[RMDB]
RNA sequence: GGGAACGACUCGAGUAGAGUCGAAAACGGAGCCGAGGGCAAGGUCUGGUGCCAGCAGCCGCGGUAAUUCCAGCUCGGCGAGCGUCGCGCGGCGCUGCUGCAGUUAAAACGCCCGUAGUUGGCCCCCCGUUUGAUUCCAGUUCGCUGGAAUCAAACGAAAAGAAACAACAACAACAAC
Reactivity to DMS in 0.01 (KOAc 150mM, MgCl2 10mM, bicine 150mM(pH8.5), 24C), signal-to-noise 1, nucleotides 027 to 126: c090g090g000a080g080c000c010g020a120g020g010g050c020a050a080g000g010u010c020u000g050g010u020g010c070c010a000g020c020a090g000c010c010g030c010g030g030u010a040a120u050u010c210c070a170g000c000u020c000g020g020c060g030a040g000c040g000u000c130g000c030g010c010g020g000c040g000c000u000g060c080u010g000c030a000g040u010u030a050a150a300a300c300g040c040c000c020g020u050a090g030u000u040g000g020c030c000c030c120c040
Reactivity to 2A3 in 0.01 (KOAc 150mM, MgCl2 10mM, bicine 150mM(pH8.5), 24C), signal-to-noise 1, nucleotides 027 to 126: c010g010g030a030g040c020c010g010a050g000g000g000c040a040a040g080g030u020c030u050g080g070u150g030c110c000a000g040c040a030g010c000c010g000c020g000g030u050a060a060u270u040c050c010a040g000c000u000c000g280g040c080g040a040g010c010g030u120c040g040c010g000c000g170g000c000g010c020u010g000c000u030g050c000a010g000u080u120a090a130a000a040c080g000c000c000c000g010u080a060g020u000u130g000g000c000c000c000c000c000